Structure probing data (DMS and 2A3) for a 177-nucleotide construct.
DMS adducts were read by reverse transcription with MarathonRT.
The data come from the RNA Mapping Database (RMDB), library OK2TST.
Conditions: 150 mM KOAc, 10 mM MgCl2 and 150 mM bicine (pH 8.5), 24 C.
[RMDB]
RNA sequence: GGGAACGACUCGAGUAGAGUCGAAAACAUGACAUUGCCGGUAGCUCACAGAAAAUUGCCGAUAUCACCAGCGUCAUCGAUGGCAUCGCUUUCCAAACCAAUAUUCUGGCAUUGAAUGCUGCGGUCGUCACUAGAGAUGGUUCGCCAUCUCUAGUGAAAAAGAAACAACAACAACAAC
Reactivity to DMS in 0.01 (KOAc 150mM, MgCl2 10mM, bicine 150mM(pH8.5), 24C), signal-to-noise 5, nucleotides 027 to 126: c060a080u000g000a060c070a080u000u000g030c010c020g000g010u000a050g020c050u000c080a070c090a090g010a060a050a070a080u000u010g010c050c040g000a060u010a080u010c100a080c060c030a050g010c060g030u000c070a080u000c070g010a050u000g010g000c060a050u000c030g010c130u000u000u000c010c080a050a070a110c120c050a050a060u010a110u000u010c060u000g010g010c030a080u000u010g010a080a120u000g020c040u000g010c040g000g010u000c120g000
Reactivity to 2A3 in 0.01 (KOAc 150mM, MgCl2 10mM, bicine 150mM(pH8.5), 24C), signal-to-noise 4, nucleotides 027 to 126: c020a050u110g040a030c010a080u070u130g030c020c010g060g020u030a020g010c000u010c040a100c020a030g140a040a100a020a040u110u060g040c010c030g050a030u030a010u080c050a030c040c000a010g040c010g080u050c030a060u050c030g070a050u060g020g000c020a030u040c020g010c020u030u060u000c030c000a080a050a060c020c020a090a020u090a120u170u080c050u070g030g000c020a040u040u100g050a070a030u060g000c010u030g010c030g070g040u030c050g030
Values cover nucleotides 27 to 126.